Conditions: 150 mM KOAc, 10 mM MgCl2 and 150 mM bicine (pH 8.5), 24 C. Chemical mapping of a 177-nucleotide RNA with 2A3 and DMS. Values are in units of 0.01, from 0 to 300, in steps of 10. For DMS, 3,202 sequencing reads were counted. For DMS the reverse transcriptase was MarathonRT. DMS (dimethyl sulfate) methylates the pairing face of unpaired adenines and cytosines.
[RMDB]
RNA sequence: GGGAACGACUCGAGUAGAGUCGAAAAAGGCAUCGACAAUAUCCCGCCAGGCCGUGCGAGGCCUGCUUAUGGGCGGGGGAGCGGGUGUGCUCGCCUCGCUGGUGAUGGCGAUGUUCGCGAUGCUGGCAGUCAGUAUACCCUUCGGGGUAUACUGACUAAAAGAAACAACAACAACAAC
Reactivity to 2A3 in 0.01 (KOAc 150mM, MgCl2 10mM, bicine 150mM(pH8.5), 24C), signal-to-noise 5, nucleotides 027 to 126: a000g020g010c010a000u010c000g080a130c060a000a020u020a010u160c030c010c010g000c010c000a020g030g000c010c060g080u070g060c060g020a010g000g010c000c000u000g010c000u150u160a190u210g110g030g020c070g020g000g010g030g040a050g020c070g010g140g130u300g110u210g090c000u040c020g060c000c010u000c010g030c020u030g010g060u040g050a300u100g010g010c080g040a010u000g020u020u060c090g000c000g000a010u010g000c000u010g030g080c000
Reactivity to DMS in 0.01 (KOAc 150mM, MgCl2 10mM, bicine 150mM(pH8.5), 24C), signal-to-noise 1, nucleotides 027 to 126: a120g010g010c000a000u000c000g030a060c070a010a000u000a040u020c140c090c020g020c020c000a000g000g020c000c000g000u020g070c060g020a020g000g060c000c000u000g020c060u020u000a100u020g030g020g020c000g030g010g020g010g000a000g040c010g030g000g000u010g030u060g000c000u000c030g000c000c000u000c050g000c020u000g050g030u000g000a140u000g010g000c000g010a030u000g020u000u000c190g040c020g000a000u000g010c030u010g010g010c190